The record gives the reactivity of an RNA of 177 nucleotides to DMS and 2A3. Conditions: 150 mM KOAc, 10 mM MgCl2 and 150 mM bicine (pH 8.5), 24 C. Source: RMDB library OK2TST, as collected in RNAgym.
RNA sequence: GGGAACGACUCGAGUAGAGUCGAAAAGGCAAAACUGAAAGCAUAUGAGACCCAGCUGUGGGUCCAAAGGUCUCCUCACCACAUUGCAGGAAGCACACGCGUGGCAGAAUCCUGGGUCAGACUCGUAUCAGGUAAACACAUUCGUGUGUUUACCUGAAAAAGAAACAACAACAACAAC
Reactivity to DMS in 0.01 (KOAc 150mM, MgCl2 10mM, bicine 150mM(pH8.5), 24C), signal-to-noise 4, nucleotides 027 to 126: g020g020c040a050a060a070a110c090u010g000a100a120a100g030c050a090u010a070u000g020a130g010a020c010c000c000a070g000c230u010g010u000g020g000g010u000c010c030a050a090a100g000g000u000c030u000c010c020u000c030a110c060c040a040c110a110u010u000g020c020a080g030g020a070a060g020c020a040c130a090c140g000c120g020u000g000g010c070a060g000a070a060u000c030c010u000g000g030g010u010c050a070g000a140c060u000c060g000u010a140
Reactivity to 2A3 in 0.01 (KOAc 150mM, MgCl2 10mM, bicine 150mM(pH8.5), 24C), signal-to-noise 2, nucleotides 027 to 126: g060g010c020a060a050a010a110c090u110g040a160a030a080g070c030a050u070a060u240g180a190g020a030c000c000c000a020g060c180u210g030u090g230g000g000u000c020c010a020a070a020g030g030u030c020u020c000c010u030c010a030c020c000a030c020a080u030u230g000c010a020g040g070a050a020g040c030a020c000a020c120g060c020g000u040g020g000c000a020g030a080a000u040c020c010u030g010g000g020u020c020a020g000a090c000u010c040g000u040a100